The record gives the reactivity of an RNA of 177 nucleotides to DMS and 2A3. It was measured as part of the RMDB library OK1LIB. The reactions ran in a buffer of 150 mM KOAc, 10 mM MgCl2 and 150 mM bicine (pH 8.5), at 24 C. Values cover nucleotides 27 to 126.
RNA sequence: GGGAACGACUCGAGUAGAGUCGAAAACAAGGACAACGUGGUGGAUGAAGGGUUCUACUUCACCCCUAAGGGGGACGACCCAUGCCUGAGCUGCACCUGCCAUGGAGGGGAGCCUGAGAUGUGUGUGCUUGCAUCCGUAAUUCGUUACGGAUGCAAGAAAAGAAACAACAACAACAAC
Reactivity to DMS in 0.01 (KOAc 150mM, MgCl2 10mM, bicine 150mM(pH8.5), 24C), signal-to-noise 3, nucleotides 027 to 126: c050a060a070g000g000a120c110a100a120c100g000u030g000g040u010g010g010a060u020g010a130a090g000g010g000u000u020c060u000a060c030u000u010c060a100c000c000c000c010u020a080a050g000g010g000g000g010a250c160g000a050c070c000c020a090u010g020c020c030u020g000a090g030c060u010g000c080a070c050c030u010g010c040c040a060u040g000g010a110g010g020g030g000a070g000c000c040u000g000a100g010a050u010g000u030g000u000g000u030g030
Reactivity to 2A3 in 0.01 (KOAc 150mM, MgCl2 10mM, bicine 150mM(pH8.5), 24C), signal-to-noise 4, nucleotides 027 to 126: c030a030a060g100g040a010c030a090a060c150g050u060g010g050u030g020g040a140u050g040a090a100g050g000g000u090u080c020u030a140c000u070u070c040a100c000c000c010c010u060a120a250g050g000g030g000g010a060c030g040a030c000c000c010a020u090g000c010c000u070g030a030g010c060u080g000c030a030c020c010u030g000c000c030a090u110g040g010a080g040g010g000g000a020g000c000c000u070g030a080g010a120u040g050u010g020u000g020u020g060